Background: This 177-nucleotide RNA was probed chemically with DMS and 2A3.
RNA sequence: GGGAACGACUCGAGUAGAGUCGAAAAACUCUGGAGGUAGAGCUACUGGAUGGCCGAUGGGCCCCACAAGGUUACUGACGUCAGCCAAACUCCGAAUGCCAGAGUGUGAGAGCGCGGCAGUGAGACUUAAAUUGGGAAAAUUCGUUUUCCCAAUUUAAAAAGAAACAACAACAACAAC
Reactivity to DMS in 0.01 (KOAc 150mM, MgCl2 10mM, bicine 150mM(pH8.5), 24C), signal-to-noise 9, nucleotides 027 to 126: a040c010u000c010u000g000g000a050g000g010u030a090g000a020g010c080u020a080c160u000g000g000a040u000g010g010c000c000g010a140u000g000g000g000c010c010c020c130a130c300a100a140g000g000u000u000a080c010u000g010a300c300g000u000c000a020g010c000c010a010a090a210c010u010c030c020g010a060a090u130g000c010c010a010g000a030g010u000g010u020g000a080g000a090g010c060g000c050g010g010c040a030g020u000g000a080g000a120c140u010
Reactivity to 2A3 in 0.01 (KOAc 150mM, MgCl2 10mM, bicine 150mM(pH8.5), 24C), signal-to-noise 9, nucleotides 027 to 126: a000c000u000c000u000g010g010a020g020g030u100a020g000a010g030c070u170a040c030u020g000g010a020u010g010g000c000c000g010a010u010g000g020g000c000c010c010c020a180c040a050a040g060g010u040u100a300c000u010g010a010c000g000u000c000a010g000c000c000a050a080a180c010u010c030c010g040a100a030u050g010c000c000a000g000a020g000u010g000u070g030a120g000a000g020c050g000c000g040g000c010a040g020u030g080a040g020a040c000u010

The reactions ran in a buffer of 150 mM KOAc, 10 mM MgCl2 and 150 mM bicine (pH 8.5), at 24 C. Reactivities are given for positions 27 through 126.